[RMDB]
RNA sequence: GGGAACGACUCGAGUAGAGUCGAAAAUCGUGACAAUUCGUUGUCACGAAACAUUAUGUCGUGAAAUAUAAAAGCCGAAAUCCCGAUACCAUAUAAUUUAAAGAAUGGAUAGUUUCGACUAUCCAAACGUUUUACUUUUAUUCGUAAAAGUAAAACGAAAAGAAACAACAACAACAAC
Reactivity to 2A3 in 0.01 (KOAc 150mM, MgCl2 10mM, bicine 150mM(pH8.5), 24C), signal-to-noise 4, nucleotides 027 to 126: u020c000g000u000g010a010c000a020a020u030u040c170g070u110u000g000u000c010a000c010g000a010a000a000c000a040u200u270a120u150g050u020c030g010u030g160a040a120a010u190a020u040a110a150a020a060g000c030c000g030a030a030a050u040c040c010c000g030a050u070a090c000c040a030u110a020u070a300a170u190u180u290a170a160a020g090a080a090u050g010g000a000u000a000g010u030u070u050c130g030a010c020u010a010u000c000c010a020a020a000
Reactivity to DMS in 0.01 (KOAc 150mM, MgCl2 10mM, bicine 150mM(pH8.5), 24C), signal-to-noise 3, nucleotides 027 to 126: u000c000g010u010g000a010c000a020a020u000u030c220g020u000u010g010u000c010a010c010g000a010a090a080c110a080u000u000a070u000g010u010c030g000u000g000a090a090a070u000a110u010a060a090a100a120g000c040c030g000a050a060a130u000c010c010c000g000a120u010a080c150c110a070u000a060u000a060a090u010u020u010a080a060a100g010a100a140u000g000g000a020u000a000g000u010u010u010c130g000a040c010u010a010u000c000c000a010a060a090
Conditions: 150 mM KOAc, 10 mM MgCl2 and 150 mM bicine (pH 8.5), 24 C.
Structure probing data (2A3 and DMS) for a 177-nucleotide construct.
For DMS, 2,290 sequencing reads were counted.
2A3 adducts were read by reverse transcription with SuperScript II with manganese.